[RMDB]
RNA sequence: GGGAACGACUCGAGUAGAGUCGAAAAUGUGUUGCGGGGACGCGUCGAUGACGUAUCGGGAACUCGACGAGGCGUCCAACCGGUUAGCGCAUCGGCUGGCAGGUUGUGGGGCCGGCCCGGGCGAGUGUACAACUAUCGCAUUCGUGCGAUAGUUGUAAAAAGAAACAACAACAACAAC
Reactivity to 2A3 in 0.01 (KOAc 150mM, MgCl2 10mM, bicine 150mM(pH8.5), 24C), signal-to-noise 3, nucleotides 027 to 126: u120g060u030g000u050u090g100c060g000g010g000g030a010c030g010c030g080u010c010g070a110u190g060a060c040g050u110a230u270c030g080g070g100a080a020c020u020c010g020a040c020g030a050g100g020c020g180u000c020c000a010a020c000c010g000g020u090u070a010g000c030g020c110a080u170c050g060g000c010u020g000g000c020a040g020g030u030u050g050u150g080g030g060g000c000c000g000g040c000c030c000g010g010g080c010g010a040g010u120g060
Reactivity to DMS in 0.01 (KOAc 150mM, MgCl2 10mM, bicine 150mM(pH8.5), 24C), signal-to-noise 2, nucleotides 027 to 126: u010g000u010g020u000u010g000c040g040g000g000g010a080c020g000c030g010u000c010g000a060u050g000a170c060g020u050a120u020c100g030g010g010a120a100c160u020c010g010a020c000g030a120g020g060c000g000u010c000c020a020a010c020c000g010g010u020u040a010g000c030g010c140a120u030c300g000g000c000u000g010g000c030a000g000g000u000u010g010u000g010g000g000g010c000c050g000g000c070c040c000g050g000g000c020g000a050g000u030g010
This 177-nucleotide RNA was probed chemically with 2A3 and DMS. The DMS profile rests on 4,495 reads.